[RMDB]
RNA sequence: GGGAACGACUCGAGUAGAGUCGAAAAUUCAACCCCAAAAGUCUAGUGCAAAUAUUGUCUUAAUUACUUAGGCUAAAAGAAAUAAGUAUUAAAGCGGGACAAGGCAUCGACAUUUGAUACAAAUAUUUUUAGCAUAUUAGAUUCGUCUAAUAUGCAACUGCAUAAGCAGUUUCGACUGCUUAUGCAGAAAAGAAACAACAACAACAAC
Reactivity to DMS in 0.01 (KOAc 150mM, MgCl2 10mM, bicine 150mM(pH8.5), 24C), signal-to-noise 1, nucleotides 027 to 156: u000u030c110a090a280c020c000c000c030a050a110a140a190g010u020c020u010a050g040u000g000c000a060a160a170u010a110u000u000g000u020c010u000u010a040a090u000u000a040c030u000u000a040g000g030c000u030a080a050a080a120g000a120a090a090u000a020a110g000u000a010u000u000a010a050a050g010c080g000g010g020a170c050a030a020g000g040c040a030u010c040g010a120c040a060u020u000u020g000a100u000a080c010a050a080a040u000a080u010u000u010u000u000a110g030c000a010u000a000u010u010a000g000a100u000u000c300g010u000c000u000a000a010u000a000u010g010c000a040a100
Reactivity to 2A3 in 0.01 (KOAc 150mM, MgCl2 10mM, bicine 150mM(pH8.5), 24C), signal-to-noise 2, nucleotides 027 to 156: u090u030c000a010a080c020c000c000c000a050a030a020a020g000u000c020u160a010g040u030g020c020a160a120a120u140a120u140u040g010u020c010u010u100a100a090u100u020a020c000u020u030a060g010g040c000u130a170a190a010a030g060a000a050a020u060a010a000g000u010a020u020u130a180a060a050g150c160g010g000g000a000c000a020a010g010g000c000a020u050c040g020a000c010a020u050u090u060g020a030u110a130c060a040a200a080u130a180u060u200u120u160u190a050g000c000a000u000a000u010u000a000g000a000u000u040c110g020u000c130u000a000a000u010a000u000g000c000a010a000
Chemical mapping of a 207-nucleotide RNA with DMS and 2A3. The DMS profile rests on 1,806 reads. Conditions: 150 mM KOAc, 10 mM MgCl2 and 150 mM bicine (pH 8.5), 24 C. It was measured as part of the RMDB library M2RFPK.